[RMDB]
RNA sequence: GGGAACGACUCGAGUAGAGUCGAAAAUAUACAUCAGAAGUCGGCACAACUCCCGACUCGCGGUGAGCGAUGCAGCGUAGCAUAGGCUACGCAGCUGCUGUGCGGAUGGCUAGCAAAAGCUAGCCUAAAAUCGGUCAUGGUUCGCCAUGACCGAUUUAAAAGAAACAACAACAACAAC
Reactivity to DMS in 0.01 (KOAc 150mM, MgCl2 10mM, bicine 150mM(pH8.5), 24C), signal-to-noise 3, nucleotides 027 to 126: u060a010u020a200c050a090u000c100a120g000a140a030g000u000c010g000g010c240a110c130a090a140c300u030c080c000c000g040a080c030u000c000g030c300g000g050u000g010a070g000c040g010a070u010g020c080a050g010c000g030u000a020g000c000a290u010a120g020g000c010u000a000c020g010c020a010g030c020u000g000c010u000g010u010g010c030g010g030a130u030g000g000c020u010a000g000c000a160a130a130a210g010c000u000a000g010c000c000u000a000
Reactivity to 2A3 in 0.01 (KOAc 150mM, MgCl2 10mM, bicine 150mM(pH8.5), 24C), signal-to-noise 2, nucleotides 027 to 126: u230a000u030a030c030a040u020c020a010g020a120a000g200u000c000g050g040c130a000c060a140a300c050u050c020c000c000g040a040c000u020c000g000c000g000g020u060g020a080g000c000g100a080u100g000c020a000g000c000g020u000a010g000c020a110u110a300g280g000c010u000a000c000g010c020a010g000c010u070g000c020u020g030u030g020c020g040g000a070u120g000g010c030u000a010g000c060a180a030a130a030g000c000u000a000g000c000c000u000a000
Structure probing data (DMS and 2A3) for a 177-nucleotide construct. For DMS the reverse transcriptase was MarathonRT. The reactions ran in a buffer of 150 mM KOAc, 10 mM MgCl2 and 150 mM bicine (pH 8.5), at 24 C.